[RMDB]
RNA sequence: GGGAACGACUCGAGUAGAGUCGAAAAGCGAUCAAUAAUAAGUCGACGACUCGAAAGAGUCGCAUGGAAACAUGCCUACUAAUGCGUCCAAUGUAGGUCGACGAUUAGGACGCAGAAGAUCGCGAAAGAGUAUAUACGGAUUCGUCCGUAUAUACUCAAAAGAAACAACAACAACAAC
Reactivity to 2A3 in 0.01 (KOAc 150mM, MgCl2 10mM, bicine 150mM(pH8.5), 24C), signal-to-noise 9, nucleotides 027 to 126: g010c000g010a000u020c060a030a030u120a210a020u090a140a020g010u000c000g000a010c000g000a000c000u010c010g030a090a060a070g000a000g000u000c000g000c000a000u000g000g020a030a030a010c000a010u000g000c010c010u010a010c010u050a040a090u110g000c000g000u000c000c010a050a100u300g000u010a010g010g010u010c010g010a020c000g000a010u020u050a020g000g010a000c000g000c000a000g000a010a010g000a000u030c010g000c020g030a050a080a070
Reactivity to DMS in 0.01 (KOAc 150mM, MgCl2 10mM, bicine 150mM(pH8.5), 24C), signal-to-noise 7, nucleotides 027 to 126: g010c000g000a000u000c000a160a100u040a080a070u020a100a190g010u000c000g010a020c000g010a010c000u000c000g000a190a100a150g000a000g010u000c000g000c000a010u000g000g000a180a090a190c000a000u000g000c000c000u000a000c020u020a080a120u010g010c000g020u010c000c000a090a060u050g000u000a010g000g000u000c010g000a040c010g000a090u020u000a080g000g000a020c000g000c000a060g000a100a080g000a000u000c010g000c010g010a070a090a070
This 177-nucleotide RNA was probed chemically with 2A3 and DMS.
For 2A3, 31,535 sequencing reads were counted.
DMS adducts were read by reverse transcription with MarathonRT.
Conditions: 150 mM KOAc, 10 mM MgCl2 and 150 mM bicine (pH 8.5), 24 C.